[RMDB]
RNA sequence: GGGAACGACUCGAGUAGAGUCGAAAAGAUAUGGAGAAAUUAGAGCAACAGCCCACCCUCGGAAACGAGGGAUGGGACAUGCUCGAUUUCUCCUAAGUCAAAAGGUUAACGCUUCGGCGUUAACCAACAUCAUUAUCGCGUUCGCGCGAUAAUGAUGAAAAGAAACAACAACAACAAC
Reactivity to 2A3 in 0.01 (KOAc 150mM, MgCl2 10mM, bicine 150mM(pH8.5), 24C), signal-to-noise 3, nucleotides 027 to 126: g000a010u020a010u050g020g000a000g000a020a020a060u110u180a210g000a020g020c150a070a180c100a290g020c010c000c010a020c010c000c000u020c000g000g050a010a010a020c010g000a000g020g000g000a020u000g000g000g000a010c010a090u300g000c010u000c000g020a000u010u000u000c000u010c000c000u000a010a000g010u010c010a010a000a070a230g000g000u000u010a010a000c010g000c020u080u180c300g200g000c010g000u010u000a000a000c000c000a000a000
Reactivity to DMS in 0.01 (KOAc 150mM, MgCl2 10mM, bicine 150mM(pH8.5), 24C), signal-to-noise 2, nucleotides 027 to 126: g000a020u000a080u010g010g000a010g010a000a010a030u000u000a100g030a020g050c000a170a070c210a120g020c000c000c000a030c000c000c010u000c000g010g010a010a000a040c000g000a020g000g010g000a010u000g020g010g000a000c020a090u020g010c010u000c000g000a000u000u000u000c000u000c000c000u000a000a030g020u000c010a140a110a140a120g020g000u010u000a000a000c020g000c000u000u010c290g040g000c000g020u000u000a000a000c000c000a040a080

Structure probing data (2A3 and DMS) for a 177-nucleotide construct. The DMS profile rests on 2,970 reads. The RNA was probed in 150 mM KOAc, 10 mM MgCl2 and 150 mM bicine (pH 8.5) at 24 C.